[RMDB]
RNA sequence: GGGAACGACUCGAGUAGAGUCGAAAACGCAGUAGCGAGUCAUUAAUUGAAUACUUUUAUGCGAUGGUAGCUAUUGGACGGCGUGCGAGUGUCGAUGAACCAUCAAUAAAUUCGUAUAUCAUCAACGUGACGCCCAGUACUUCGGUACUGGGCGUCAAAAAGAAACAACAACAACAAC
Reactivity to 2A3 in 0.01 (KOAc 150mM, MgCl2 10mM, bicine 150mM(pH8.5), 24C), signal-to-noise 1, nucleotides 027 to 126: c020g050c000a000g000u040a000g040c090g050a070g050u120c000a010u020u120a300a140u060u000g070a060a070u110a270c070u000u130u050u080a050u130g050c060g000a020u020g090g000u020a000g070c120u000a000u000u090g040g000a000c010g010g000c000g000u070g090c090g000a090g070u010g000u000c000g000a000u070g110a000a010c100c000a030u010c010a000a100u190a040a100a040u130u000c000g000u000a090u000a000u120c040a000u090c000a000a000c020g100
Source: RMDB library OK1LIB, as collected in RNAgym. This 177-nucleotide RNA was probed chemically with 2A3. The reactions ran in a buffer of 150 mM KOAc, 10 mM MgCl2 and 150 mM bicine (pH 8.5), at 24 C. For 2A3, 340 sequencing reads were counted.